RNA sequence: GGGAACGACUCGAGUAGAGUCGAAAAUAACCCUUAUACUUGUAUAGGCGAUUAAUAAAUCUUCUGUAAAUGCUGUAAGAGGAUUACCCCUUGAGGUUUCAGCACUAGGCUGCUCUAGCGAUUAAUCACAACGAUUUGGUCUUCGGACCAAAUCGAACACUCAACUAACCUUCGGGUUAGUUGAGUGAAAAGAAACAACAACAACAAC
Reactivity to 2A3 in 0.01 (KOAc 150mM, MgCl2 10mM, bicine 150mM(pH8.5), 24C), signal-to-noise 1, nucleotides 027 to 156: u060a010a030c010c010c010u010u100a160u030a100c020u030u060g040u080a140u020a030g000g100c010g070a060u050u110a120a170u150a300a170a020u020c000u100u050c010u000g070u030a050a110a000u020g000c050u000g100u070a010a000g090a020g070g030a040u060u060a040c000c000c000c000u030u010g110a060g050g000u030u090u170c010a000g000c030a020c110u080a080g180g120c060u030g030c010u060c060u080a020g050c070g080a070u000u250a160a090u180c060a050c090a280a060c050g000a000u020u000u000g000g010u000c010u000u050c210g070g000a020c000c000a000a000a000u000c000g010a000a000
Annotation
Structure probing data (2A3) for a 207-nucleotide construct. The RNA was probed in 150 mM KOAc, 10 mM MgCl2 and 150 mM bicine (pH 8.5) at 24 C. It was measured as part of the RMDB library M2RFPK. Reactivities are rounded to 0.1 and cut off at 0 and 3. For 2A3 the reverse transcriptase was SuperScript II with manganese.